[RMDB]
This 177-nucleotide RNA was probed chemically with DMS and 2A3.
For 2A3 the reverse transcriptase was SuperScript II with manganese.
For DMS, 858 sequencing reads were counted.
RNA sequence: GGGAACGACUCGAGUAGAGUCGAAAAGAUAAUGUCUUCGGACAUUAUCCACGCCUAAAGGCUUUAAUUAAUUAGGUAAGCCUGCUAAUUAAAAUGGCAUUAACAACUGUCCAUUCGUGGACAGUAAGAACUAUCAGCCAUUCGUGGCUGAUAGUUCAAAAGAAACAACAACAACAAC
Reactivity to DMS in 0.01 (KOAc 150mM, MgCl2 10mM, bicine 150mM(pH8.5), 24C), signal-to-noise 1, nucleotides 027 to 126: g000a010u010a010a030u000g010u000c000u010u010c270g030g000a070c000a000u000u000a010u000c000c090a130c220g000c000c010u000a120a140a060g020g020c010u000u010u000a070a090u010u000a090a050u010u000a030g010g010u000a070a030g020c000c010u000g000c130u000a020a020u000u000a040a060a150a160u000g010g000c020a140u010u000a080a100c200a060a010c010u000g000u000c000c010a050u000u010c230g010u000g030g000a000c000a000g010u010a010a090
Reactivity to 2A3 in 0.01 (KOAc 150mM, MgCl2 10mM, bicine 150mM(pH8.5), 24C), signal-to-noise 2, nucleotides 027 to 126: g000a000u010a000a030u000g000u050c000u040u060c230g070g010a000c000a000u000u000a000u000c000c000a050c040g010c000c000u080a150a100a050g040g000c000u130u060u030a090a080u080u080a040a120u110u100a100g130g020u010a050a000g030c020c020u000g050c010u060a150a210u190u130a140a000a020a100u150g030g010c010a020u130u100a090a040c020a030a010c010u000g000u000c000c000a000u020u060c250g100u020g000g010a000c000a000g000u000a000a010